[RMDB]
RNA sequence: GGGAACGACUCGAGUAGAGUCGAAAAGGAGACAAUUCCACUGACCCCCUCCCCAGAGGACAAGGCACUGGGCAGGGAGGUUGGGGUGGCGAGGGCUCAGGAAAACAUUCUGUCCCAGAGGCAAGGCUUUCUAGGCCAAGUGCUAGACAUGCAGCCAAAAAUGAUAAUAUUUCGAUAUUAUCAUUUUAAAAGAAACAACAACAACAAC
Reactivity to 2A3 in 0.01 (KOAc 150mM, MgCl2 10mM, bicine 150mM(pH8.5), 24C), signal-to-noise 2, nucleotides 027 to 156: g050g010a030g020a040c080a050a090u120u010c000c000a020c100u060g080a100c000c000c000c020c010u000c000c020c000c000a040g030a040g060g020a050c050a060a110g050g000c060a010c050u050g010g000g000c070a030g030g010g040a120g030g000u060u030g000g000g010g080u060g020g010c100g040a140g010g020g000c050u060c160a060g040g090a030a030a010a070c050a070u100u020c020u080g010u000c000c020c060a030g050a090g050g000c020a030a070g060g000c030u140u060u080c060u080a060g020g020c020c010a090a010g050u080g050c020u020a000g030a010c030a000u130g020c020a020g040c000c000a030
Reactivity to DMS in 0.01 (KOAc 150mM, MgCl2 10mM, bicine 150mM(pH8.5), 24C), signal-to-noise 3, nucleotides 027 to 156: g020g020a130g030a100c070a110a140u010u000c020c020a050c060u000g010a160c010c000c020c000c000u000c060c000c010c020a150g000a150g010g010a180c060a070a100g000g000c020a090c020u010g030g010g000c130a090g010g000g000a040g010g000u010u010g000g000g000g020u000g000g030c050g010a110g030g020g000c050u000c030a080g010g000a080a110a070a110c080a100u000u000c050u010g030u000c010c000c030a120g030a140g010g030c030a090a180g000g000c010u000u010u000c040u000a150g020g020c030c020a040a150g010u000g000c010u000a100g010a220c060a100u000g010c120a130g010c010c030a050